Chemical mapping of a 207-nucleotide RNA with DMS and 2A3.
Conditions: 150 mM KOAc, 10 mM MgCl2 and 150 mM bicine (pH 8.5), 24 C.
It was measured as part of the RMDB library OK3TST.
For 2A3, 858 sequencing reads were counted.
RNA sequence: GGGAACGACUCGAGUAGAGUCGAAAAAACUCCACACGCACGCUUGCUUGAAUUCAAUAGGUAUGUAUUCCUUGUCGAUCGGACCCAAACUAAUUUUAUUGUUGAAACUAUUACUGAUGCCGUUGAGGUCUACGAGAAAGUACCCCGUGUCAUUGUGACGAUAAAGACCAUUCGUGGUCUUUAUCGUAAAAGAAACAACAACAACAAC
Reactivity to DMS in 0.01 (KOAc 150mM, MgCl2 10mM, bicine 150mM(pH8.5), 24C), signal-to-noise 1, nucleotides 027 to 156: a070a020c030u000c010c040a080c050a040c040g020c040a090c070g010c010u010u030g000c020u000u000g030a090a020u000u010c040a020a100u000a070g010g020u000a090u000g020u000a180u000u000c030c000u000u010g020u000c030g010a070u010c040g060g010a220c030c020c000a120a080a080c090u050a050a090u000u020u020u000a080u000u020g010u000u000g000a110a050a070c080u000a100u000u010a040c050u000g000a050u000g030c060c080g030u000u000g010a090g010g030u020c030u000a070c030g000a110g010a080a040a100g010u010a070c000c020c000c040g020u010g000u000c030a200u000u020g000u010g000
Reactivity to 2A3 in 0.01 (KOAc 150mM, MgCl2 10mM, bicine 150mM(pH8.5), 24C), signal-to-noise 2, nucleotides 027 to 156: a000a000c050u050c000c030a080c000a000c050g050c000a030c030g030c000u040u070g000c000u050u110g120a080a050u190u120c120a090a050u050a080g030g020u140a080u180g040u040a060u120u120c010c010u040u010g090u110c000g010a060u030c020g000g010a040c000c020c040a120a080a040c090u160a070a170u090u210u130u220a180u120u070g000u050u030g050a020a050a040c040u060a050u300u110a030c090u150g060a030u020g040c050c010g050u040u070g050a040g010g030u000c000u010a020c030g060a040g070a110a080a010g050u020a030c020c000c010c010g060u040g000u050c000a040u110u090g010u050g040